This 177-nucleotide RNA was probed chemically with DMS and 2A3.
[RMDB]
RNA sequence: GGGAACGACUCGAGUAGAGUCGAAAAGAUCACUACCGCUUGUGAGCGAUACGCGCUCCGUUGUGCUCAUAAUUAUUCGCGUUACGCACGACCGUGUAACAUCCCGGCACGAGAGGUAUCUGGUCGCUCUCGCUGUAGGUUUCGACCUGCAGUGGGGAAAAGAAACAACAACAACAAC
Reactivity to DMS in 0.01 (KOAc 150mM, MgCl2 10mM, bicine 150mM(pH8.5), 24C), signal-to-noise 9, nucleotides 027 to 126: g000a020u010c010a020c170u000a020c010c010g010c050u000u010g010u010g000a040g000c070g010a150u010a060c130g010c050g010c140u010c060c090g010u000u010g010u010g000c020u010c140a110u020a050a050u020u020a100u030u020c130g010c110g010u010u000a060c110g010c030a050c060g000a040c070c050g000u000g000u010a040a080c080a120u020c030c040c010g000g000c010a020c010g000a040g000a040g000g010u000a010u010c110u010g000g000u000c010g010c130
Reactivity to 2A3 in 0.01 (KOAc 150mM, MgCl2 10mM, bicine 150mM(pH8.5), 24C), signal-to-noise 9, nucleotides 027 to 126: g010a010u020c000a000c020u020a010c000c010g020c050u040u070g030u060g060a020g020c020g030a040u040a110c100g020c010g000c050u010c020c020g010u020u040g020u030g010c010u020c090a080u080a140a070u150u170a120u120u160c080g010c030g080u040u060a030c040g000c010a010c010g020a020c010c020g000u010g010u040a070a050c020a080u050c010c010c000g030g030c010a010c010g060a060g000a010g020g010u010a020u010c040u010g010g000u010c010g000c020

It was measured as part of the RMDB library OK1LIB.
The RNA was probed in 150 mM KOAc, 10 mM MgCl2 and 150 mM bicine (pH 8.5) at 24 C.